An RNA of 207 nucleotides, treated with 2A3 and read out base by base. The RNA was probed in 150 mM KOAc, 10 mM MgCl2 and 150 mM bicine (pH 8.5) at 24 C. It was measured as part of the RMDB library OK3TST.
RNA sequence: GGGAACGACUCGAGUAGAGUCGAAAACGCAAGACGAUGUAUAGGAGCUGACGCCUGCCCGGUGCUGGAAGGUUAAGGGGAUCUGUUAGAGCAAUCGAAGCAGUGAACUUAAGCCCCAGUAAACGGCGGCCGUAACUAUAACGGUCCUAAGGUAGCAAGCAUUAAUUAGCUUCGGCUAAUUAAUGCUAAAAGAAACAACAACAACAAC
Reactivity to 2A3 in 0.01 (KOAc 150mM, MgCl2 10mM, bicine 150mM(pH8.5), 24C), signal-to-noise 1, nucleotides 027 to 156: c010g020c040a050a030g080a060c050g030a070u130g120u130a080u020a130g040g000a030g010c050u040g030a020c050g020c020c010u060g030c010c010c030g120g030u090g000c000u000g060g000a140a110g010g030u070u030a120a050g010g000g000g000a000u000c010u010g300u300u000a010g000a010g000c030a020a060u010c000g010a000a000g000c010a010g000u010g040a000a000c040u000u000a010a000g000c010c000c000c010a010g000u030a090a040a000c060g010g010c050g000g000c000c000g000u010a010a010c010u030a080u060a170a040c010g040g000u010c000c030u100a020a010g090g030u040a030g040c040a030